[RMDB]
RNA sequence: GGGAACGACUCGAGUAGAGUCGAAAAUAAGCGCCCUGAAGCCGCCUUCGAACCUUCGGGUUCUCCGGUGUGUGGAUGCGCGUGAACCGAUCUGGUAGUAGCCAAGCGAUGGGGUGACGCAGGAAGGUACAAAAUUGCCUUUCGAGGCAAUUUUGUAAAAAGAAACAACAACAACAAC
Reactivity to 2A3 in 0.01 (KOAc 150mM, MgCl2 10mM, bicine 150mM(pH8.5), 24C), signal-to-noise 2, nucleotides 027 to 126: u120a040a030g020c000g000c040c040c000u000g050a000a000g020c000c000g010c000c000u020u060c040g000a000a000c000c000u010u040c160g070g010g000u000u010c000u000c000c010g020g000u020g080u150g000u020g000g010a020u040g020c030g000c000g020u020g010a020a030c020c000g040a080u070c040u080g000g010u010a070g030u050a000g050c010c040a070a000g060c050g090a080u150g000g000g000g000u000g020a000c040g000c040a000g030g050a130a030g040g000
Reactivity to DMS in 0.01 (KOAc 150mM, MgCl2 10mM, bicine 150mM(pH8.5), 24C), signal-to-noise 4, nucleotides 027 to 126: u010a130a290g040c070g010c000c050c030u020g000a300a170g000c010c010g030c010c000u030u000c250g000a010a020c000c010u010u070c280g030g010g030u010u000c000u010c300c200g010g020u010g000u020g030u010g010g020a060u000g000c300g030c010g000u010g020a160a190c030c030g010a060u040c080u030g010g020u010a060g030u020a070g000c010c030a080a090g030c040g000a050u030g010g000g010g020u000g000a060c120g000c050a100g020g000a080a060g020g010

About this RNA:
Conditions: 150 mM KOAc, 10 mM MgCl2 and 150 mM bicine (pH 8.5), 24 C. The record gives the reactivity of an RNA of 177 nucleotides to 2A3 and DMS. The DMS profile rests on 3,741 reads. Reactivities are given for positions 27 through 126. It was measured as part of the RMDB library RFM100.